[RMDB]
RNA sequence: GGGAACGACUCGAGUAGAGUCGAAAACGUGGUGAUGGUACUUUAAGUGGAGGCUGAAUCAUUUCCCCUUUGAGCUGCAUGGCACAUGGCUCCCUUGGUGUUCCCAUUUUACAGCCAGGACACUGAGGUCUCCUGAGUCCUUCGGGACUCAGGAGACAAAAGAAACAACAACAACAAC
Reactivity to 2A3 in 0.01 (KOAc 150mM, MgCl2 10mM, bicine 150mM(pH8.5), 24C), signal-to-noise 1, nucleotides 027 to 126: c020g080u010g000g030u170g020a020u210g090g020u120a100c000u000u000u110a170a100g010u010g010g090a050g000g050c010u040g070a020a000u050c000a000u000u000u170c000c000c000c000u000u080u210g000a000g020c010u060g000c010a100u030g150g000c050a010c010a050u010g000g010c000u060c010c000c010u050u120g010g050u010g000u010u090c040c000c000a020u110u030u050u020a140c140a000g000c030c000a010g000g020a050c080a010c100u000g040a000g050